Source: RMDB library 15KREP, as collected in RNAgym. An RNA of 177 nucleotides, treated with DMS and 2A3 and read out base by base. The 2A3 profile rests on 3,606 reads. The RNA was probed in 150 mM KOAc, 10 mM MgCl2 and 150 mM bicine (pH 8.5) at 24 C. For 2A3 the reverse transcriptase was SuperScript II with manganese. The DMS profile rests on 2,640 reads.

RNA sequence: GGGAACGACUCGAGUAGAGUCGAAAAAAAACUGGUACAGGUAUAGCUAUAUCUGUUAAACCAGAGAGUACAGCUGAUCAAGAGACUUAUGGUGGAGCUUCAGUGUGUCUCUAUUGCCGUGCGCAUAGCAUGGAAUAAUGUUCGCAUUAUUCCAUGCAAAAGAAACAACAACAACAAC
Reactivity to DMS in 0.01 (KOAc 150mM, MgCl2 10mM, bicine 150mM(pH8.5), 24C), signal-to-noise 3, nucleotides 027 to 126: a040a040a110a140c000u000g000g010u000a020c010a020g000g010u000a010u010a150g030c140u010a070u000a000u000c000u000g010u000u000a040a040a020c010c000a000g010a100g000a090g010u000a040c040a140g000c020u010g000a080u000c120a060a080g030a300g010a030c040u000u020a090u000g010g020u000g000g000a110g020c060u000u000c030a020g020u000g000u000g010u000c010u000c000u000a060u000u000g010c020c030g010u010g020c110g010c080a050u000a090
Reactivity to 2A3 in 0.01 (KOAc 150mM, MgCl2 10mM, bicine 150mM(pH8.5), 24C), signal-to-noise 3, nucleotides 027 to 126: a000a000a010a000c000u010g010g000u020a010c000a010g000g020u000a010u030a050g130c130u100a010u000a010u030c000u000g000u010u020a080a030a010c010c010a000g010a000g000a000g050u060a040c010a010g010c020u030g030a050u100c070a080a030g030a010g030a100c030u120u110a090u250g100g020u060g040g070a020g020c000u060u010c020a020g020u050g030u000g000u120c010u000c000u030a060u010u080g010c020c020g090u110g010c060g010c040a060u090a050